RNA sequence: GGGAACGACUCGAGUAGAGUCGAAAAGCGACAAGCUAGAAGAUGAUGAAACACAUCACCGUGCCAUCGCAAAAGGCGGGAGUGAAGUCCCCAGCUGGCAGAUAAACCUCCUGCUACCAGCUUUUGACCCAUGCAUAGGAUUCGUCCUAUGCAUGGGAAAAGAAACAACAACAACAAC
Reactivity to 2A3 in 0.01 (KOAc 150mM, MgCl2 10mM, bicine 150mM(pH8.5), 24C), signal-to-noise 9, nucleotides 027 to 126: g030c010g020a030c060a110a030g010c030u100a090g040a100a040g050a160u050g010a010u030g040a100a220a010c120a020c010a100u010c010a010c040c030g020u020g000c010c020a030u040c020g000c050a030a090a020a020g080g010c020g000g000g000a010g010u120g040a070a030g100u050c010c010c000c010a030g050c100u120g020g020c020a010g010a110u190a060a140a080c000c020u020c010c010u000g000c010u020a040c010c030a010g060c010u070u050u060u140g120a100
Reactivity to DMS in 0.01 (KOAc 150mM, MgCl2 10mM, bicine 150mM(pH8.5), 24C), signal-to-noise 4, nucleotides 027 to 126: g000c050g000a050c080a130a160g010c040u010a060g020a150a110g000a090u000g000a040u030g000a120a180a140c200a230c030a010u000c000a050c030c000g000u010g030c000c070a170u000c020g000c000a060a070a100a110g000g000c030g010g000g020a110g000u030g010a090a170g010u000c000c070c020c030a110g050c070u020g020g010c200a030g010a040u010a040a100a130c130c010u000c010c020u010g010c030u000a020c070c040a040g000c070u000u020u000u000g000a300
Chemical mapping of a 177-nucleotide RNA with 2A3 and DMS. The 2A3 profile rests on 9,489 reads. The RNA was probed in 150 mM KOAc, 10 mM MgCl2 and 150 mM bicine (pH 8.5) at 24 C. Reactivities are rounded to 0.1 and cut off at 0 and 3.